[RMDB]
RNA sequence: GGGAACGACUCGAGUAGAGUCGAAAAGUGCUUGAGCACGGAUGUCGAUCCGGAAAGACAUUGUCGUUGCGACGAGAGUUCGAUCCGAUCCGGAAAGCAUUUGCUCUCUUUGUGCUCUUGCACGAAAGGGUGUGCCGAGCUUCGGCUUGGUACACCCAAAAGAAACAACAACAACAAC
Reactivity to 2A3 in 0.01 (KOAc 150mM, MgCl2 10mM, bicine 150mM(pH8.5), 24C), signal-to-noise 9, nucleotides 027 to 126: g000u000g000c000u000u010g000a000g000c000a000c010g020g010a090u070g120u220c040g010a040u010c050c040g000g010a030a030a010g010a010c020a040u010u080g070u020c030g140u160u230g140c150g040a010c000g000a010g010a010g060u100u080c030g010a070u000c020c020g010a040u000c010c010g030g000a030a030a010g000c030a090u050u100u300g030c010u030c000u000c000u090u090u140g000u000g000c000u000c000u000u010g000c000a000c000g000a040a010a000
Reactivity to DMS in 0.01 (KOAc 150mM, MgCl2 10mM, bicine 150mM(pH8.5), 24C), signal-to-noise 5, nucleotides 027 to 126: g010u000g000c000u000u000g000a010g030c000a010c000g000g010a020u010g010u030c160g000a060u010c060c060g000g010a020a100a270g010a000c060a120u020u000g020u000c000g020u050u020g040c090g010a020c030g000a040g000a090g000u010u010c040g000a250u010c020c020g010a080u010c000c040g010g010a020a050a080g010c010a250u020u030u040g010c030u000c030u010c020u010u000u020g000u000g000c010u000c010u000u000g000c000a000c000g040a040a070a100
About this RNA: The data come from the RNA Mapping Database (RMDB), library OK1LIB. This 177-nucleotide RNA was probed chemically with 2A3 and DMS. The reactions ran in a buffer of 150 mM KOAc, 10 mM MgCl2 and 150 mM bicine (pH 8.5), at 24 C. For 2A3, 42,303 sequencing reads were counted.